An RNA of 207 nucleotides, treated with 2A3 and DMS and read out base by base. Source: RMDB library OK3TST, as collected in RNAgym. The DMS profile rests on 1,471 reads. Values cover nucleotides 27 to 156. The RNA was probed in 150 mM KOAc, 10 mM MgCl2 and 150 mM bicine (pH 8.5) at 24 C.
[RMDB]
RNA sequence: GGGAACGACUCGAGUAGAGUCGAAAAAGAGCUUGUCUCAGUGUAGCAGGACAAGCCGCAGACAAAACCCCUCAGACACUGAGUUAGAGAAGGAAGGGCUUUAUUCAGCCGGGGGCUUUGGCAAGAUUCACGUCUCUAACAACCGAGCUCCCCAAGAAUCGCAUAAUUAUUUCGAUAAUUAUGCGAUAAAAGAAACAACAACAACAAC
Reactivity to 2A3 in 0.01 (KOAc 150mM, MgCl2 10mM, bicine 150mM(pH8.5), 24C), signal-to-noise 1, nucleotides 027 to 156: a020g040a040g000c000u020u010g000u020c050u000c120a130g050u100g030u130a090g070c120a050g010g010a000c000a000a010g000c000c010g010c030a120g020a080c010a050a110a020a070c000c000c020c000u000c010a070g070a100c010a010c110u040g010a000g080u050u200a070g020a020g020a090a050g080g040a050a060g020g010g050c000u040u030u080a080u160u040c030a010g030c150c050g100g000g000g000g030c000u030u190u290g030g000c040a050a040g010a060u150u210c090a020c120g060u000c010u000c000u130a140a050c010a010a000c040c000g000a000g000c000u040c000c030c000c000a020a030g050a000
Reactivity to DMS in 0.01 (KOAc 150mM, MgCl2 10mM, bicine 150mM(pH8.5), 24C), signal-to-noise 1, nucleotides 027 to 156: a070g000a130g000c020u000u020g020u000c020u000c010a130g000u020g000u000a090g060c080a150g000g010a020c010a000a080g000c020c020g000c150a200g020a120c030a030a070a050a110c040c020c020c030u020c060a130g000a130c070a100c070u000g000a150g020u010u000a000g030a170g000a110a110g010g020a040a060g010g020g020c010u020u000u000a060u040u010c080a110g000c020c070g040g000g040g110g000c010u000u010u020g060g010c030a050a100g020a160u010u020c100a120c070g040u000c000u000c020u000a020a080c080a090a040c040c000g020a020g000c000u010c040c030c020c040a040a120g010a150